[RMDB]
The data come from the RNA Mapping Database (RMDB), library M2RFPK. This 207-nucleotide RNA was probed chemically with 2A3 and DMS. Reactivities are given for positions 27 through 156. The RNA was probed in 150 mM KOAc, 10 mM MgCl2 and 150 mM bicine (pH 8.5) at 24 C. For DMS the reverse transcriptase was MarathonRT.

RNA sequence: GGGAACGACUCGAGUAGAGUCGAAAAAUACAUACUGACACCGGUUGCUCAACAGGCUGUGUGGGACAAUAGAAUAACAAGGCUGGCAAUUUGAGCUUGACGGCUGCAAACCGAAUGGAGUGAAAUCGUAACCGGACUCACUUCGGUGAGUCCGGAAGCUAUGUAAUCGUUUCGACGAUUACAUAGCAAAAGAAACAACAACAACAAC
Reactivity to 2A3 in 0.01 (KOAc 150mM, MgCl2 10mM, bicine 150mM(pH8.5), 24C), signal-to-noise 2, nucleotides 027 to 156: a000u100a040c030a050u100a040c020u100g040a020c020a020c120c040g040g000u050u030g010c010u040c050a070a060c050a090g080g010c010u020g020u000g000u060g130g040g020a010c030a040a090u130a190g090a050a050u100a070a000c030a080a030g040g020c010u010g000g000c030a020a010u030u010u120g030a020g020c000u010u040g050a040c000g010g040c020u060g010c030a020a060a070c010c040g030a010a070u090g060g000a030g010u040g030a060a000a070u110c050g010u060a060a050c000c000g000g000a000c000u000c000a010c000u020u030c120g000g000u010g000a010g000u000c000c000g000g010a000a000
Reactivity to DMS in 0.01 (KOAc 150mM, MgCl2 10mM, bicine 150mM(pH8.5), 24C), signal-to-noise 1, nucleotides 027 to 156: a120u000a050c050a160u020a190c060u000g010a170c040a090c020c020g040g020u000u020g010c010u010c090a130a050c000a040g010g020c010u000g000u000g030u010g000g020g000a170c040a080a170u010a070g020a090a070u000a080a100c030a050a120g030g000c030u010g020g000c020a090a080u000u010u000g020a120g000c070u000u020g010a060c090g020g000c030u010g000c100a040a080a060c000c030g030a060a140u000g000g020a150g000u000g000a080a140a110u000c110g010u000a160a170c000c000g000g000a030c000u000c000a030c000u000u010c300g020g020u010g020a020g000u000c000c050g000g000a010a030